[RMDB]
RNA sequence: GGGAACGACUCGAGUAGAGUCGAAAAGAUAUGGAUAUACGUGAUGAGGGAGAACCGGGUCGGAAACGACCUCGUUCAUCGAUCUCAUCAUAUCCUAAGUCAAAAGACAUAACUUCGGUUAUGUCAACACCAACUUCUUCUUCGGAAGAAGUUGGUGAAAAGAAACAACAACAACAAC
Reactivity to 2A3 in 0.01 (KOAc 150mM, MgCl2 10mM, bicine 150mM(pH8.5), 24C), signal-to-noise 1, nucleotides 027 to 126: g000a010u100a010u160g040g000a030u040a010u050a240c240g170u110g020a000u000g000a010g060g090g020a210g000a030a030c050c020g040g000g000u040c000g000g000a040a000a050c000g000a000c000c000u010c010g030u000u000c040a060u300c090g050a170u000c000u000c030a030u030c000a000u040a010u000c000c010u020a120a030g020u050c030a030a060a200a080g010a000c000a000u020a020a010c010u070u080c300g120g020u010u010a010u020g000u000c000a000a000
Reactivity to DMS in 0.01 (KOAc 150mM, MgCl2 10mM, bicine 150mM(pH8.5), 24C), signal-to-noise 1, nucleotides 027 to 126: g010a020u000a180u000g020g000a000u000a050u000a110c300g000u000g010a020u000g000a010g000g000g000a110g030a020a040c000c140g000g010g000u000c010g000g000a050a000a110c010g040a000c000c020u000c300g000u000u000c020a210u000c200g020a170u000c020u000c000a010u000c000a010u000a000u000c000c000u030a020a200g010u010c030a120a080a140a150g000a000c000a010u000a010a000c000u000u000c300g000g000u000u000a000u000g000u000c000a070a160
Structure probing data (2A3 and DMS) for a 177-nucleotide construct.
For DMS the reverse transcriptase was MarathonRT.
For 2A3 the reverse transcriptase was SuperScript II with manganese.